[RMDB]
RNA sequence: GGGAACGACUCGAGUAGAGUCGAAAAGAUAUGGAUUGGCGACGAGUUGUGGUCGGAAACGACCAUACAACGAUGAGUCGCCCAAUCCUAAGUCAAAUCAGAGACAGCCUUCGGGCUGUCUCUGAAAGUUCUUUAGUUGGUUCGCCAACUAAAGAACAAAAGAAACAACAACAACAAC
Reactivity to DMS in 0.01 (KOAc 150mM, MgCl2 10mM, bicine 150mM(pH8.5), 24C), signal-to-noise 1, nucleotides 027 to 126: g020a030u000a010u020g000g000a020u000u000g010g010c000g000a000c000g000a030g030u000u000g010u000g000g020u030c000g040g000a010a010a020c000g020a010c000c000a040u020a020c050a010a010c010g020a230u020g020a240g010u010c000g000c290c110c060a000a000u000c000c000u000a020a060g000u000c000a120a160a200u010c000a000g010a030g020a010c000a000g010c010c010u000u010c260g060g000g000c000u010g010u000c000u000c010u000g000a010a050a150
Reactivity to 2A3 in 0.01 (KOAc 150mM, MgCl2 10mM, bicine 150mM(pH8.5), 24C), signal-to-noise 1, nucleotides 027 to 126: g020a000u000a010u090g000g000a010u000u010g010g000c000g000a000c000g030a020g060u000u000g000u010g030g000u000c000g020g000a000a010a000c000g000a000c000c000a020u110a080c020a000a000c000g140a140u300g020a020g000u020c010g000c020c000c000a040a000u000c000c010u010a010a000g010u010c010a000a050a300u090c000a000g020a030g000a030c010a000g040c080c000u190u300c300g060g030g090c010u000g000u020c000u040c010u000g020a000a000a000
An RNA of 177 nucleotides, treated with DMS and 2A3 and read out base by base.
It was measured as part of the RMDB library TTRDES.
2A3 adducts were read by reverse transcription with SuperScript II with manganese.
DMS adducts were read by reverse transcription with MarathonRT.
For 2A3, 2,344 sequencing reads were counted.